RNA sequence: GGGAACGACUCGAGUAGAGUCGAAAAGAUAUGGAAGGGAGCGAUAAGCUGCGUUCGGAAACGAACGGCAGCUUUUGACGUGACCUUCCUAAGUCAAAAUCAAAUGUCGCUUCGGCGACAUUUGAAACAGGUGAAUAAACUUCGGUUUAUUCACCUGAAAAGAAACAACAACAACAAC
Reactivity to 2A3 in 0.01 (KOAc 150mM, MgCl2 10mM, bicine 150mM(pH8.5), 24C), signal-to-noise 2, nucleotides 027 to 126: g000a000u040a020u080g000g010a000a000g020g000g000a040g020c010g040a130u060a300a030g000c000u000g000c000g010u000u020c010g000g060a070a060a020c010g000a010a000c050g070g040c000a000g000c010u030u000u040u040g020a010c020g000u000g030a040c000c010u010u000c000c000u000a030a000g020u010c020a020a000a000a270u010c000a000a000a000u000g000u000c000g000c040u050u050c240g170g000c000g000a000c010a000u000u000u000g000a010a010a000
Reactivity to DMS in 0.01 (KOAc 150mM, MgCl2 10mM, bicine 150mM(pH8.5), 24C), signal-to-noise 4, nucleotides 027 to 126: g010a060u000a300u000g000g000a040a010g000g010g010a300g000c010g010a100u010a030a010g010c000u000g000c000g020u000u000c000g010g000a090a090a170c020g010a000a000c010g010g060c000a000g000c000u000u000u000u010g020a150c030g020u000g010a300c010c000u000u010c010c000u000a020a100g000u010c030a070a110a120a110u000c000a010a040a020u000g000u010c000g010c000u000u010c170g020g000c020g010a000c000a000u000u000u000g000a010a080a170